RNA sequence: GGGAACGACUCGAGUAGAGUCGAAAACUCGAUCCGUACUCGUACUCGACGUGGCCACGGCCCGGCCUCAGAGUGAUCCUAGGAUCGAGCGCAUGCGCCUGCGAGAGACGGUACGUGAUCACUGGCCAUCCUUCCAGAUGUUCGCAUCUGGAAGGAUAAAAGAAACAACAACAACAAC
Reactivity to 2A3 in 0.01 (KOAc 150mM, MgCl2 10mM, bicine 150mM(pH8.5), 24C), signal-to-noise 3, nucleotides 027 to 126: c020u020c030g000a010u000c000c010g030u020a010c060u100c270g010u070a110c010u020c050g220a240c100g240u080g030g000c010c010a030c040g070g000c000c020c000g010g020c010c020u040c110a020g040a010g050u110g110a070u110c000c020u030a040g020g040a200u090c000g010a020g020c060g050c010a020u090g010c080g000c040c020u040g010c020g000a020g000a040g000a020c000g000g000u010a010c000g060u140g010a010u020c020a030c130u050g060g020c010c040
Reactivity to DMS in 0.01 (KOAc 150mM, MgCl2 10mM, bicine 150mM(pH8.5), 24C), signal-to-noise 2, nucleotides 027 to 126: c020u000c070g000a010u000c010c010g010u000a020c010u020c000g010u000a080c020u000c010g000a090c110g020u010g010g020c010c010a050c110g000g020c010c010c060g020g000c010c010u000c130a060g010a050g010u020g000a130u000c050c040u000a030g010g010a060u000c010g000a010g000c010g020c020a090u000g000c120g010c020c010u000g000c030g000a300g010a110g010a030c030g000g000u010a010c020g020u020g010a010u010c010a140c090u000g010g010c100c080
An RNA of 177 nucleotides, treated with 2A3 and DMS and read out base by base. Values are in units of 0.01, from 0 to 300, in steps of 10. For 2A3 the reverse transcriptase was SuperScript II with manganese. Reactivities are given for positions 27 through 126. For DMS, 2,890 sequencing reads were counted.